An RNA of 177 nucleotides, treated with DMS and 2A3 and read out base by base. The RNA was probed in 150 mM KOAc, 10 mM MgCl2 and 150 mM bicine (pH 8.5) at 24 C.
RNA sequence: GGGAACGACUCGAGUAGAGUCGAAAAGCUGUGGGAUCCCAGCGCUCAAUGUCAGCUAACGUCAACGCCGUCGCAUCGGGCGCUUCCACCGCCUGUUGGAUAAACCGCGGCCAGUGCCGCGGCGUUGCAUGAAACGUUGUUUCGACAACGUUUCAUGAAAAGAAACAACAACAACAAC
Reactivity to DMS in 0.01 (KOAc 150mM, MgCl2 10mM, bicine 150mM(pH8.5), 24C), signal-to-noise 5, nucleotides 027 to 126: g010c020u010g020u000g010g000g010a110u010c020c010c030a240g010c050g010c040u000c020a040a020u000g010u000c100a090g030c130u020a090a110c140g010u010c090a040a040c070g020c160c020g000u000c300g000c010a020u000c070g010g020g000c000g010c030u000u000c000c010a010c060c070g010c060c170u010g010u010u000g010g000a120u010a060a100a120c180c090g010c020g020g000c000c100a090g020u010g010c000c060g000c000g010g000c020g000u010u000g020
Reactivity to 2A3 in 0.01 (KOAc 150mM, MgCl2 10mM, bicine 150mM(pH8.5), 24C), signal-to-noise 2, nucleotides 027 to 126: g000c000u000g000u000g000g060g080a150u050c020c030c000a010g020c020g010c020u050c020a000a050u060g130u080c020a030g000c090u070a100a060c040g120u060c070a060a050c020g010c020c000g010u030c020g000c000a020u030c030g010g040g000c000g000c000u030u000c000c000a000c000c000g020c010c020u080g050u080u060g020g030a070u090a140a090a030c020c040g000c000g030g040c040c080a210g020u200g190c030c000g000c000g000g060c010g000u020u030g050